[RMDB]
RNA sequence: GGGAACGACUCGAGUAGAGUCGAAAACGCUGGGUCGCUCGUAACAUCGACAUGCUGAUACCUGAAGCGCGCACGGGUAAUAGCAACAGCGUGGAGCGACCUGUGCUGAAGCGCGCACGGCAACCGAAAGGUGCGAUUAUACGGUUUCGACCGUAAAGUUAGACAAGGGAUUCGUCCCUUGUCUAACAAAAGAAACAACAACAACAAC
Reactivity to DMS in 0.01 (KOAc 150mM, MgCl2 10mM, bicine 150mM(pH8.5), 24C), signal-to-noise 2, nucleotides 027 to 156: c080g030c050u000g010g030g030u000c030g000c000u000c000g040u000a110a150c150a110u010c000g030a300c060a110u000g000c010u000g030a300u000a040c000c020u000g020a060a100g040c010g020c020g000c000a300c030g000g010g000u000a080a160u000a150g060c030a140a180c050a020g000c020g000u010g010g020a050g040c000g000a010c000c010u000g020u000g000c030u000g000a110a110g040c010g020c040g000c000a100c060g000g010c020a110a090c000c000g010a070a100a180g010g010u000g030c070g010a230u000u000a150u000a050c000g000g000u000u000u000c190g010a040c000c020g010u000a040a060a150
Reactivity to 2A3 in 0.01 (KOAc 150mM, MgCl2 10mM, bicine 150mM(pH8.5), 24C), signal-to-noise 5, nucleotides 027 to 156: c030g000c000u020g000g000g010u000c000g010c010u000c000g180u230a160a120c060a230u230c170g130a100c040a070u090g000c000u050g010a060u040a040c000c000u030g060a190a100g000c000g010c000g000c020a020c020g020g000g000u090a150a140u190a200g120c120a050a140c030a100g030c020g040u050g070g010a000g010c000g000a000c000c010u000g020u010g010c020u050g010a060a040g000c010g000c000g000c010a010c000g030g000c020a070a060c010c000g060a110a010a040g010g020u020g020c000g000a010u090u100a090u150a120c010g000g040u080u100u180c170g070a050c010c000g000u000a110a040a000
Source information
This 207-nucleotide RNA was probed chemically with DMS and 2A3. It was measured as part of the RMDB library RNAMAK. Values cover nucleotides 27 to 156. The RNA was probed in 150 mM KOAc, 10 mM MgCl2 and 150 mM bicine (pH 8.5) at 24 C.